[RMDB]
RNA sequence: GGGAACGACUCGAGUAGAGUCGAAAAGCUUCUUCAUCCCUGGGAGACAACAAAGACGAAGACAAACCCCACGAUUCAUUAGGUAUACAGCUCGAUGAUAAUUCCCAGAACUCAAUGGUACCUGCUAACGGAAAAUUAGUUUCGACUAAUUUUCCGUAAAAGAAACAACAACAACAAC
Reactivity to 2A3 in 0.01 (KOAc 150mM, MgCl2 10mM, bicine 150mM(pH8.5), 24C), signal-to-noise 1, nucleotides 027 to 126: g000c030u020u060c000u010u040c000a100u050c040c000c010u000g030g050g020a050g020a050c030a100a020c000a070a270a040g000a020c050g050a020a000g010a010c030a010a100a050c020c000c010c030a040c030g010a000u080u160c060a010u130u050a020g020g020u040a060u020a130c000a030g050c060u040c080g030a060u070g010a030u070a100a060u080u010c050c010c000a000g030a090a050c080u120c060a020a080u100g050g040u040a040c010c010u050g130c050u070a030
Reactivity to DMS in 0.01 (KOAc 150mM, MgCl2 10mM, bicine 150mM(pH8.5), 24C), signal-to-noise 2, nucleotides 027 to 126: g000c030u010u010c030u000u000c030a140u000c020c010c010u020g020g030g020a090g030a110c110a050a070c060a030a080a090g010a070c090g010a060a070g000a040c070a070a140a130c060c020c020c030a110c050g010a090u000u010c020a070u000u000a040g000g020u030a060u000a120c070a070g000c030u000c070g000a030u000g010a120u000a080a210u020u010c000c010c000a180g000a040a090c090u010c110a020a110u000g010g000u000a020c040c010u000g010c180u000a120